[RMDB]
RNA sequence: GGGAACGACUCGAGUAGAGUCGAAAAUUGACGGUGUGCAAUAUUAUUGCUACACGUCUAAGGACACUUUAGAUGAUAUCUUACAACAGGCUAAUAAGUCUGUUGGUAUUAUAUCUAUGCCUUUGGGAACCACUCGCCUUCGGGCGAGUGAAAAGAAACAACAACAACAAC
Reactivity to 2A3 in 0.01 (KOAc 150mM, MgCl2 10mM, bicine 150mM(pH8.5), 24C), signal-to-noise 4, nucleotides 027 to 129: u060u110g000a000c020g060g040u040g010u010g040c000a000a000u070a060u300u130a050u040u100g000c000u040a000c040a040c000g000u000c000u010a050a040g000g000a050c010a020c170u080u040u090a100g010a050u110g000a000u010a000u000c020u020u030a010c020a000a000c020a000g000g000c000u040a120a070u080a300a000g000u000c000u000g000u010u020g010g030u000a000u000u000a010u000a000u010c010u020a000u090g000c000c000u000u070u110g020g000g010a020a040c030
Reactivity to DMS in 0.01 (KOAc 150mM, MgCl2 10mM, bicine 150mM(pH8.5), 24C), signal-to-noise 4, nucleotides 027 to 129: u000u000g010a000c020g030g040u010g040u030g040c050a000a000u020a200u080u050a130u010u050g030c020u040a060c020a020c000g010u000c000u020a000a090g080g010a180c140a120c140u020u060u010a100g020a070u040g030a000u000a020u040c040u000u000a060c010a000a050c020a020g010g040c010u040a170a090u040a000a070g020u010c000u010g040u030u020g000g000u040a020u050u000a020u030a020u000c000u050a080u000g020c020c000u000u000u000g020g020g020a130a090c150
Structure probing data (2A3 and DMS) for a 170-nucleotide construct.
Reactivities are given for positions 27 through 129.
The RNA was probed in 150 mM KOAc, 10 mM MgCl2 and 150 mM bicine (pH 8.5) at 24 C.
The 2A3 profile rests on 5,898 reads.
It was measured as part of the RMDB library 15KLIB.